[RMDB]
RNA sequence: GGGAACGACUCGAGUAGAGUCGAAAAGUCUAGCGAACGGAUCCCACCCGGGACACACGCAAGUCGCGAAUUACGCCGACCGGCCAAGGUCAAUAGCAGAACUCAACUGCAUGAGUAAGCUAGACGAAUAAUAAUACCCUUUCGAGGGUAUUAUUAUAAAAGAAACAACAACAACAAC
Reactivity to DMS in 0.01 (KOAc 150mM, MgCl2 10mM, bicine 150mM(pH8.5), 24C), signal-to-noise 7, nucleotides 027 to 126: g010u000c010u000a010g010c000g000a180a080c050g000g010a050u000c010c010c010a210c300c030c030g010g010g000a100c120a080c060a110c090g010c040a100a080g010u010c070g010c070g010a200a100u000u010a060c060g020c070c060g010a100c020c190g010g020c030c080a140a150g000g000u000c020a070a070u000a100g000c010a020g010a090a100c130u000c190a050a090c020u000g010c030a080u000g010a090g010u000a070a230g010c000u000a000g000a010c020g010a110
Reactivity to 2A3 in 0.01 (KOAc 150mM, MgCl2 10mM, bicine 150mM(pH8.5), 24C), signal-to-noise 4, nucleotides 027 to 126: g000u000c000u000a010g000c010g040a080a040c050g040g030a060u030c010c000c020a020c020c010c010g030g010g030a020c010a010c010a010c100g020c050a080a030g090u080c030g010c030g060a110a210u280u120a100c040g040c080c050g040a020c020c000g000g020c030c020a070a050g000g010u030c010a030a060u090a090g000c010a000g040a210a090c060u070c220a090a190c040u040g000c020a040u070g050a030g060u030a040a000g020c000u000a000g000a000c000g000a000